Structure probing data (DMS and 2A3) for a 207-nucleotide construct. It was measured as part of the RMDB library RSTRND. Values cover nucleotides 27 to 156. Conditions: 150 mM KOAc, 10 mM MgCl2 and 150 mM bicine (pH 8.5), 24 C. DMS adducts were read by reverse transcription with MarathonRT. High 2A3 reactivity points to a flexible backbone, as in loops and unpaired stretches.
[RMDB]
RNA sequence: GGGAACGACUCGAGUAGAGUCGAAAAACGUCAUUCGUGCUGGAGUGUGGCCGAGUUAAUGCACUCGGGUAAGGUAACAACUCCCAGUUCGAUAGGAUUGACCUGCAGCCAAGCCUUUGGUUACGCCAAGGGUACUGUUCACAGACUAAAUGAUGACCUUAUGGUAAACCUUCGGGUUUACCAUAAGAAAAGAAACAACAACAACAAC
Reactivity to DMS in 0.01 (KOAc 150mM, MgCl2 10mM, bicine 150mM(pH8.5), 24C), signal-to-noise 2, nucleotides 027 to 156: a100c080g040u010c040a120u010u000c060g000u020g000c060u000g020g010a180g000u000g040u000g020g030c010c020g010a050g000u000u010a110a190u010g010c170a060c010u000c000g020g000g030u010a060a060g020g030u000a150a050c020a030a090c030u010c020c020c000a100g000u000u040c030g040a160u000a110g010g010a160u000u010g010a050c030c010u000g000c030a240g020c030c040a080a180g000c010c010u000u010u000g010g030u010u000a120c250g020c010c010a020a040g000g020g040u000a020c020u010g010u010u000c030a080c040a120g000a130c050u010a050a050a090u020g000a110u000g000a140c110
Reactivity to 2A3 in 0.01 (KOAc 150mM, MgCl2 10mM, bicine 150mM(pH8.5), 24C), signal-to-noise 6, nucleotides 027 to 156: a000c030g030u010c020a050u060u030c020g010u020g030c000u000g010g020a050g020u100g010u050g050g070c000c000g010a010g000u040u120a240a120u290g060c110a000c020u010c010g000g020g020u120a140a030g090g100u110a070a030c040a010a080c010u070c030c020c010a000g000u020u030c020g010a030u040a080g120g020a020u050u100g100a080c010c010u020g000c010a020g050c050c070a090a040g010c000c020u020u010u010g020g010u080u150a060c200g020c020c000a010a010g000g010g000u040a020c010u030g030u050u080c050a030c030a120g060a070c070u150a080a100a100u180g060a120u090g020a040c000